[RMDB]
RNA sequence: GGGAACGACUCGAGUAGAGUCGAAAAAAAAACGCUGGGCGACCUCGGGUGUAGACAUGACGAGUACUGAAGCGCGCACGGUAUGACGUCAACAGCUACAUCUCUAGCGUGGGUCGCCUGUGCUGAAGCGCGCACGGCAACCGAAAGGUGCGAAAAAGGAACAUAGGUAGUUCGCUACCUAUGUUCCAAAAGAAACAACAACAACAAC
Reactivity to 2A3 in 0.01 (KOAc 150mM, MgCl2 10mM, bicine 150mM(pH8.5), 24C), signal-to-noise 1, nucleotides 027 to 156: a000a000a000a000a000c070g000c000u010g000g000g000c000g010a000c000c000u000c050g020g020g000u010g000u030a000g030a050c130a280u100g000a000c000g010a020g010u000a020c000u000g040a220a060g000c000g000c000g040c020a040c010g040g000u000a010u090g160a200c010g030u010c030a100a070c060a220g090c000u020a010c000a010u010c050u020c140u170a110g150c050g100u220g000g020g000u000c000g000c000c000u000g000u040g000c000u030g000a060a030g000c020g000c020g000c010a000c000g180g000c020a050a040c000c000g010a080a000a020g050g000u030g000c000g060a030a010a030a000a010